[RMDB]
RNA sequence: GGGAACGACUCGAGUAGAGUCGAAAAGAAAGAAAGUACUGAAAGUAUUGUGGGCAAUAAUGUGUAAAUCAUUGACCGUUCCUGCGCUGGUAAGAAUAAAAUUUUAGUCCAGACACCACCAGUAUAACCAAUCUAGUGACCUUCGGGUCACUAGAAACCGAGUUACUAUGUUCGCAUAGUAACUCGGAAAAGAAACAACAACAACAAC
Reactivity to DMS in 0.01 (KOAc 150mM, MgCl2 10mM, bicine 150mM(pH8.5), 24C), signal-to-noise 1, nucleotides 027 to 156: g000a130a150a060g020a100a070a200g040u000a070c020u000g000a120a180a090g000u000a080u000u000g000u000g010g010g010c050a060a040u020a040a020u000g030u020g000u000a020a080a250u000c060a020u040u000g020a060c000c020g000u000u020c060c000u010g020c130g060c000u000g020g000u000a090a090g040a090a050u000a100a010a050a300u000u000u020u020a220g010u000c000c030a060g000a160c230a110c010c000a010c060c030a070g000u000a140u010a140a050c080c050a000a200u020c010u000a040g020u000g000a000c000c010u000u000c300g020g010g080u000c000a000c010u020a000g000a010a000a040
Reactivity to 2A3 in 0.01 (KOAc 150mM, MgCl2 10mM, bicine 150mM(pH8.5), 24C), signal-to-noise 2, nucleotides 027 to 156: g030a010a100a000g070a090a110a010g030u040a030c010u040g050a120a100a050g040u160a180u220u130g010u010g000g010g020c010a000a030u050a040a010u010g050u000g000u050a030a000a010u020c010a000u020u040g020a020c000c000g010u090u110c060c030u100g000c020g000c000u000g000g030u020a030a010g020a030a040u150a150a200a090a090u040u080u030u040a030g000u000c000c000a000g000a010c020a040c050c000a000c000c000a000g020u040a050u030a080a030c100c050a020a050u000c000u010a000g010u000g000a000c000c000u010u020c120g110g000g000u000c000a000c000u000a000g000a010a000a000